About this RNA
An RNA of 207 nucleotides, treated with 2A3 and DMS and read out base by base. It was measured as part of the RMDB library RNAMAK. DMS (dimethyl sulfate) methylates the pairing face of unpaired adenines and cytosines. For 2A3, 10,635 sequencing reads were counted. For DMS, 10,821 sequencing reads were counted.
[RMDB]
RNA sequence: GGGAACGACUCGAGUAGAGUCGAAAAACCUUUGUUCGCAAAGGUAAAAAAGCGUACUACUGCGAGGGAUAGGGAGCCUGACUUCCCAAAUAGGAAGUAGGCAUCGAUCUAUCCUCCCCACCGCAGUAUCGCAAAAAGAUUUGCUUCGGCAAAUCAACAAUAAGAAAUGGUUCGCCAUUUCUUAUUGAAAAGAAACAACAACAACAAC
Reactivity to 2A3 in 0.01 (KOAc 150mM, MgCl2 10mM, bicine 150mM(pH8.5), 24C), signal-to-noise 3, nucleotides 027 to 156: a010c010c000u010u000u000g050u040u060c160g020c170a000a010a020g000g040u200a130a100a030a000a010a040g020c020g010u040a040c020u000a000c000u010g000c010g000a020g000g000g000a000u000a010g020g000g000a010g000c000c020u080g190a110c000u010u020c000c010c000a060a190a150u110a030g000g000a000a000g000u000a000g000g000c020a080u300c030g010a010u010c000u000a010u000c000c000u030c010c010c010c000a020c000c000g000c000a000g000u010a030u160c000g000c000a010a110a050a040a010g010a000u000u000u000g000c000u020u060c200g100g000c000a000a000a000u010c000a000a030
Reactivity to DMS in 0.01 (KOAc 150mM, MgCl2 10mM, bicine 150mM(pH8.5), 24C), signal-to-noise 4, nucleotides 027 to 156: a050c010c000u000u000u010g020u010u000c240g010c050a030a050a040g010g030u000a000a050a100a110a060a180g000c010g020u000a050c030u000a010c010u000g010c020g010a280g000g000g000a030u000a040g000g000g010a050g030c000c020u010g010a050c010u000u000c000c000c010a010a120a130u000a030g010g020a030a010g030u000a060g030g020c000a090u000c150g010a030u000c010u010a010u000c000c010u000c300c030c000c110a300c030c000g030c000a010g010u000a000u000c020g000c000a040a050a120a100a110g000a040u000u000u000g010c000u000u000c300g020g010c010a030a010a020u000c010a070a130